The data come from the RNA Mapping Database (RMDB), library OK2TST.
Chemical mapping of a 177-nucleotide RNA with DMS and 2A3.
The DMS profile rests on 5,441 reads.
The 2A3 profile rests on 6,103 reads.
RNA sequence: GGGAACGACUCGAGUAGAGUCGAAAACGGCGGAGCGUGCGCCCGCCGGCUGCACCGACGGCGAGUAUCUGGCGCUUGCCACCGCCGACGGUCCUGCGCUGGAAGCCGUUGCCGCACUGGCUGAUUCCGUAUCGAUGUUUUUCGAAACAUCGAUACGAAAAGAAACAACAACAACAAC
Reactivity to DMS in 0.01 (KOAc 150mM, MgCl2 10mM, bicine 150mM(pH8.5), 24C), signal-to-noise 5, nucleotides 027 to 126: c070g010g000c000g020g010a150g010c040g020u010g010c080g010c090c010c060g020c020c010g000g000c130u010g030c080a110c050c040g020a080c000g000g010c000g000a120g010u010a090u000c210u010g020g020c010g020c140u000u010g010c020c020a120c060c020g000c030c030g000a050c030g010g010u010c040c070u000g000c070g000c020u010g000g010a120a200g010c020c020g010u000u000g000c050c010g000c060a080c090u010g000g010c050u010g000a150u010u000c020
Reactivity to 2A3 in 0.01 (KOAc 150mM, MgCl2 10mM, bicine 150mM(pH8.5), 24C), signal-to-noise 4, nucleotides 027 to 126: c010g020g010c000g040g000a040g010c030g040u190g030c040g030c010c030c020g000c010c000g010g000c030u160g030c040a040c020c020g010a040c000g000g010c010g020a070g100u090a200u210c150u100g020g000c060g030c150u120u300g000c000c000a070c020c000g000c000c010g010a020c010g000g020u030c000c020u060g010c040g020c040u070g010g050a060a050g000c010c000g030u030u120g100c000c020g020c030a070c100u070g060g020c040u040g050a180u140u040c040